[RMDB]
RNA sequence: GGGAACGACUCGAGUAGAGUCGAAAACCCGGAGUCUAUCUCCAUCUGGUCCGUCCGGGCCCUCUUCGCCGGGGGAGGCCCCUCUCCAUCCUUAUCCUUCUUUCCGAGAAUUCCUUUGAUGUUUCCCAGCCAGGGAUUGUCAUCCUCUAUCUUCUUGCUUUCUUUAUAUCUUCGGAUAUAAAGAAAGAAAAGAAACAACAACAACAAC
Reactivity to 2A3 in 0.01 (KOAc 150mM, MgCl2 10mM, bicine 150mM(pH8.5), 24C), signal-to-noise 2, nucleotides 027 to 156: c000c000c010g020g010a020g020u030c050u240a160u070c020u040c020c020a080u050c070u120g040g040u030c020c040g080u030c060c070g070g010g000c080c030c010u020c000u120u110c060g080c060c030g000g020g000g040g030a050g020g010c020c010c000c000u040c000u020c010c010a070u010c010c020u060u080a060u070c010c000u060u060c000u060u070u040c060c020g050a030g050a160a060u040u060c020c020u070u090u150g040a080u070g090u030u040u030c000c050c000a030g040c030c060a030g040g010g010a010u000u110g030u040c020a040u040c010c040u070c020u110a120u080c040u030u000c000u010u050g010

The data come from the RNA Mapping Database (RMDB), library VIROID. This 207-nucleotide RNA was probed chemically with 2A3. The reactions ran in a buffer of 150 mM KOAc, 10 mM MgCl2 and 150 mM bicine (pH 8.5), at 24 C.